[RMDB]
RNA sequence: GGGAACGACUCGAGUAGAGUCGAAAAGAUAUGGACCCUUCUGGGAUUUGAUGACCUCGGAAACGAGCAAGAAUUCCCAGAGAGGGUCCUAAGUCAAAACGUUCACUCCGUUCGCGGAGUGAACGAACCCUUAUUUUGUCUUCGGACAAAAUAAGGGAAAAGAAACAACAACAACAAC
Reactivity to 2A3 in 0.01 (KOAc 150mM, MgCl2 10mM, bicine 150mM(pH8.5), 24C), signal-to-noise 1, nucleotides 027 to 126: g020a020u090a030u140g000g000a000c000c000c000u020u020c010u010g060g000g000a020u070u010u090g190a190u150g040a090c010c010u000c020g020g000a080a100a060c010g010a000g000c020a020a170g000a070a040u230u260c000c010c030a020g030a030g000a010g000g010g000u000c000c000u000a010a010g020u010c000a020a020a020a120c030g010u010u010c000a020c010u000c000c020g060u080u060c200g010c050g220g020a030g000u000g000a000a000c010g010a000a000
Reactivity to DMS in 0.01 (KOAc 150mM, MgCl2 10mM, bicine 150mM(pH8.5), 24C), signal-to-noise 1, nucleotides 027 to 126: g000a030u000a300u010g000g000a000c000c000c010u010u000c010u000g000g010g000a020u000u000u000g010a090u000g000a090c300c010u010c010g000g010a120a160a290c010g010a000g020c060a120a100g000a020a020u010u000c000c000c000a010g000a040g010a010g000g000g000u000c000c000u000a020a070g020u000c030a050a060a120a160c000g010u000u000c000a020c000u000c000c000g070u000u010c240g000c010g020g000a020g010u010g010a000a000c000g000a020a040